The record gives the reactivity of an RNA of 177 nucleotides to 2A3 and DMS. DMS adducts were read by reverse transcription with MarathonRT. It was measured as part of the RMDB library OK2TST. The RNA was probed in 150 mM KOAc, 10 mM MgCl2 and 150 mM bicine (pH 8.5) at 24 C.
[RMDB]
RNA sequence: GGGAACGACUCGAGUAGAGUCGAAAAUCUUGCACUCUGCUUCCUGAUCUUAUUGUCUUCAUCAAUCAUGGAUAGGAACAUAUCUUCCAAAUUGUCGGAAGCAAAACCAGAUUGUAAAGCAUGCUGAAGUACGCUGGAUAUUCGUAUCCAGCGUACUAAAAGAAACAACAACAACAAC
Reactivity to 2A3 in 0.01 (KOAc 150mM, MgCl2 10mM, bicine 150mM(pH8.5), 24C), signal-to-noise 2, nucleotides 027 to 126: u010c010u010u070g000c000a030c040u120c030u020g070c020u040u000c020c040u050g030a060u040c020u030u080a080u140u040g060u050c050u070u070c030a100u020c020a040a050u030c020a200u040g000g010a000u060a140g020g060a060a060c020a090u180a070u080c000u010u000c000c010a050a030a170u050u070g080u140c070g080g000a010a020g010c000a000a020a000a020c000c010a020g010a040u020u040g080u120a050a000a040g080c000a040u100g020c020u060g040a030
Reactivity to DMS in 0.01 (KOAc 150mM, MgCl2 10mM, bicine 150mM(pH8.5), 24C), signal-to-noise 2, nucleotides 027 to 126: u010c070u000u000g000c000a150c120u000c160u010g000c080u000u000c040c060u010g000a050u000c080u010u000a160u010u000g000u000c080u000u000c130a120u030c020a020a000u000c110a080u000g010g000a060u000a040g020g010a050a100c290a120u010a070u000c010u020u000c050c000a070a070a120u000u000g000u000c220g030g010a030a010g000c080a020a030a060a050c080c180a040g010a060u000u000g000u000a060a070a030g000c110a050u010g050c090u000g000a200